[RMDB]
RNA sequence: GGGAACGACUCGAGUAGAGUCGAAAAACGCGAGGAUUCGUCCUCGCGUACAUAAGUGAGUUCGCCGGAUAGCUGCCUUAGUGAGUUCGCCGGAUAGCUGCCAAGCACAUAGUUUCGACUAUGUGAAUGUAGCUCACAAAUUCGUUUGUGAGCUACAAAAAGAAACAACAACAACAAC
Reactivity to DMS in 0.01 (KOAc 150mM, MgCl2 10mM, bicine 150mM(pH8.5), 24C), signal-to-noise 2, nucleotides 027 to 126: a030c010g020c000g010a030g010g000a020u000u000c200g000u010c010c000u000c010g030c000g010u000a010c110a060u010a100a100g000u000g020a100g030u000u010c090g020c050c030g000g000a060u000a150g030c030u010g030c060c090u000u000a070g020u010g010a110g000u010u000c050g010c080c000g000g000a050u010a110g010c010u000g000c050c070a060a160g000c010a010c000a000u000a000g000u000u000u010c170g000a030c000u010a000u010g010u010g000a020a090
Reactivity to 2A3 in 0.01 (KOAc 150mM, MgCl2 10mM, bicine 150mM(pH8.5), 24C), signal-to-noise 1, nucleotides 027 to 126: a000c000g000c000g000a000g000g050a040u040u040c130g060u020c130c010u010c000g000c000g010u010a010c000a020u270a060a070g060u060g180a070g010u020u060c050g030c000c000g000g020a040u060a070g030c060u160g160c010c000u180u120a040g030u030g180a050g030u010u080c050g010c020c000g000g000a000u010a010g000c020u060g150c050c000a060a000g130c000a000c000a000u000a000g020u000u090u040c130g070a000c010u000a000u040g010u000g000a030a000
Background
Source: RMDB library M2PK50, as collected in RNAgym. Structure probing data (DMS and 2A3) for a 177-nucleotide construct. The RNA was probed in 150 mM KOAc, 10 mM MgCl2 and 150 mM bicine (pH 8.5) at 24 C. Reactivities are given for positions 27 through 126. For 2A3 the reverse transcriptase was SuperScript II with manganese.